RNA sequence: GGGAACGACUCGAGUAGAGUCGAAAACACGUACUUCGGUACGUGAAAAAUCCUAAGUCAUCUUUCCCUUGGACCCGUACUUGUCAGUCGGAAACGACUUGGAUUUAGUACGGCUAGGGAUGGAUGAUAUGGAAAAAAAGAUCAGUUCGCUGAUCAACCGUGAUACACUGUUCGCAGUGUAUCACGGAAAAGAAACAACAACAACAAC
Reactivity to 2A3 in 0.01 (KOAc 150mM, MgCl2 10mM, bicine 150mM(pH8.5), 24C), signal-to-noise 1, nucleotides 027 to 156: c000a000c000g000u000a000c000u010u010c120g150g000u000a010c010g000u010g020a040a010a000a000a010u010c020c000u020a200a000g020u000c000a010u000c000u020u000u000c000c000c000u060u140g300g020a270c000c000c030g010u000a000c010u010u010g010u000c010a010g000u000c010g050g000a090a030a070c020g000a000c000u080u140g160g000a020u270u140u130a000g000u000a000c000g000g020c000u020a000g010g000g000a000u000g010g000a000u000g000a000u020a020u050g000g060a020a090a020a010a010a020a060g040a010u060c000a010g030u080u080c220g070c090u010g010a000u020c020a000a050
The data come from the RNA Mapping Database (RMDB), library RNAMAK. This 207-nucleotide RNA was probed chemically with 2A3. The reactions ran in a buffer of 150 mM KOAc, 10 mM MgCl2 and 150 mM bicine (pH 8.5), at 24 C. For 2A3, 2,222 sequencing reads were counted.